[RMDB]
RNA sequence: GGGAACGACUCGAGUAGAGUCGAAAAAGUGGUGCAACUAGGUGCGCCUGGCGUAUCGGACAUGAAUGGGCGUCCUGGCAGAGGAUCACAGGAUAUGGUGUCCGCAGUGCACCGUCAUGUCUGUGAGGGCGCGGUGGUCCUUCGGGAUCGUUGCGCCAAAAGAAACAACAACAACAAC
Reactivity to 2A3 in 0.01 (KOAc 150mM, MgCl2 10mM, bicine 150mM(pH8.5), 24C), signal-to-noise 9, nucleotides 027 to 126: a000g130u070g010g010u020g010c010a040a030c040u090a070g180g030u100g050c010g010c000c010u010g060g050c080g030u090a070u140c020g010g010a010c010a020u040g040a110a060u080g010g020g000c050g020u050c000c010u010g040g020c070a050g050a090g130g020a050u180c030a010c010a050g140g040a120u120a070u270g090g010u020g010u020c010c010g010c020a020g020u050g010c010a020c040c000g000u000c010a000u020g020u020c010u010g040u040g050a130g020
Reactivity to DMS in 0.01 (KOAc 150mM, MgCl2 10mM, bicine 150mM(pH8.5), 24C), signal-to-noise 9, nucleotides 027 to 126: a070g010u010g010g010u000g010c010a030a060c060u030a110g020g020u030g000c010g010c010c010u000g010g000c130g010u030a080u020c040g010g000a030c020a020u000g000a050a050u030g010g010g010c080g010u010c070c010u000g000g010c100a140g010a140g000g000a050u030c030a040c020a080g010g010a120u040a070u040g010g010u010g000u000c010c030g010c060a040g000u010g010c010a030c000c000g000u000c030a020u000g000u000c020u000g010u010g000a220g000
Source: RMDB library OK1LIB, as collected in RNAgym. This 177-nucleotide RNA was probed chemically with 2A3 and DMS. Values cover nucleotides 27 to 126. For DMS the reverse transcriptase was MarathonRT. For 2A3 the reverse transcriptase was SuperScript II with manganese. Conditions: 150 mM KOAc, 10 mM MgCl2 and 150 mM bicine (pH 8.5), 24 C.